The record gives the reactivity of an RNA of 177 nucleotides to DMS and 2A3. For DMS the reverse transcriptase was MarathonRT. The RNA was probed in 150 mM KOAc, 10 mM MgCl2 and 150 mM bicine (pH 8.5) at 24 C.

RNA sequence: GGGAACGACUCGAGUAGAGUCGAAAAGAUAUGGAGAAUAAAGGCAACAGCACGCUGUCGGAAACGACAGUCGUGACAUGCCUGAAUUCUCCUAAGUCAAAGGAGUGAAAGUUCGCUUUCACUCCAAGUUUGGGAUAGGGUUCGCCCUAUCCCAAACAAAAGAAACAACAACAACAAC
Reactivity to DMS in 0.01 (KOAc 150mM, MgCl2 10mM, bicine 150mM(pH8.5), 24C), signal-to-noise 2, nucleotides 027 to 126: g020a010u000a260u020g000g010a000g030a030a000u010a040a260a020g000g010c000a130a130c300a160g010c010a010c010g020c000u000g060u000c010g020g000a050a040a060c030g040a000c020a000g000u010c000g040u020g000a030c060a300u010g010c010c000u010g010a260a060u000u000c000u000c010c000u020a010a060g020u000c050a080a180a110g050g000a010g000u000g010a010a000a000g000u000u030c300g010c010u020u000u000c000a020c000u000c000c000a010a050
Reactivity to 2A3 in 0.01 (KOAc 150mM, MgCl2 10mM, bicine 150mM(pH8.5), 24C), signal-to-noise 2, nucleotides 027 to 126: g030a020u030a010u050g000g000a000g010a010a020u040a050a080a030g020g030c100a300a040c160a300g040c010a020c000g000c010u010g030u000c020g000g000a010a030a010c000g030a000c020a000g050u110c020g000u020g040a010c010a140u300g000c000c010u020g000a000a000u000u000c000u000c010c010u000a000a000g000u010c020a040a060a280g000g000a020g000u010g020a020a000a020g020u120u220c300g080c180u010u000u010c000a000c010u000c000c000a000a010